[RMDB]
RNA sequence: GGGAACGACUCGAGUAGAGUCGAAAAGGCUUCAGCGGACUAUGUCGAUCGGGUGUCCGUACUAAGUUCGGUAUCGAUAUGGUGCUCCUGGGGGAGCCCGGGAUCACCAGGUCGCCUAAGGAGGGGUGCCCCGGCCCAGGUCGGAAACGAAGCAGGUCCUCAGAAUAGAGUUCGCUCUAUUCUGAGGAAAAGAAACAACAACAACAAC
Reactivity to 2A3 in 0.01 (KOAc 150mM, MgCl2 10mM, bicine 150mM(pH8.5), 24C), signal-to-noise 2, nucleotides 027 to 156: g090g000c010u040u060c020a040g170c040g110g010a000c040u040a060u160g000u040c020g050a120u120c070g070g000g000u070g020u030c000c000g000u000a020c030u090a040a190g040u110u160c060g030g020u060a090u160c060g020a000u020a040u110g000g000u010g020c020u010c010c020u000g000g000g000g060g150a180g130c000c010c000g000g000g000a000u020c000a000c000c010a000g000g000u000c000g000c000c000u080a090a010g090g040a060g010g020g020g030u020g010c000c010c000c000g000g000c000c060c000a040g040g020u010c000g040g020a050a110a060c070g010a000a030g000c010a010g100g000u000